RNA sequence: GGGAACGACUCGAGUAGAGUCGAAAAAUGAGAUCCCAUCUUGCACACUGUGCUAAUUUGAGAUUCUCAUGCCUCCUACUUGGAGAGAUCUGGACUAGAAGUCAGGGCAUCUGACUCCGCCAGCCACAAAACGUACAAGGCUUCGGCCUUGUACGAAUCCGAAUUUAAGGUUCGCCUUAAAUUCGGAAAAAGAAACAACAACAACAAC
Reactivity to DMS in 0.01 (KOAc 150mM, MgCl2 10mM, bicine 150mM(pH8.5), 24C), signal-to-noise 2, nucleotides 027 to 156: a050u000g010a000g010a040u000c000c010c010a010u000c080u000u000g000c000a060c020a170c160u020g000u000g050c020u000a010a030u000u000u010g020a040g010a020u000u000c000u000c030a030u000g000c100c060u000c010c010u000a120c190u000u010g010g000a080g020a130g000a130u000c020u030g000g030a130c060u010a180g010a080a020g010u000c010a020g030g040g030c200a110u000c020u000g000a000c000u010c020c030g010c000c030a040g030c030c030a160c070a060a040a050a170c040g020u000a010c000a020a030g000g010c010u010u000c300g040g010c000c000u000u020g020u000a030c020g000a030a050
Reactivity to 2A3 in 0.01 (KOAc 150mM, MgCl2 10mM, bicine 150mM(pH8.5), 24C), signal-to-noise 4, nucleotides 027 to 156: a000u010g000a000g000a000u010c000c000c010a000u000c020u010u030g010c010a020c040a080c200u300g020u020g010c050u120a050a060u010u020u000g020a030g000a030u270u030c010u000c010a000u060g020c010c020u000c000c010u090a210c110u110u230g040g010a050g010a020g010a110u040c010u030g050g000a060c030u050a090g030a120a010g050u000c000a000g010g050g110c100a100u090c070u000g010a000c000u010c010c000g020c010c000a020g020c030c000a090c030a030a080a070a020c020g000u000a000c000a000a000g000g000c000u020u120c120g060g000c000c000u010u000g000u000a000c000g000a000a010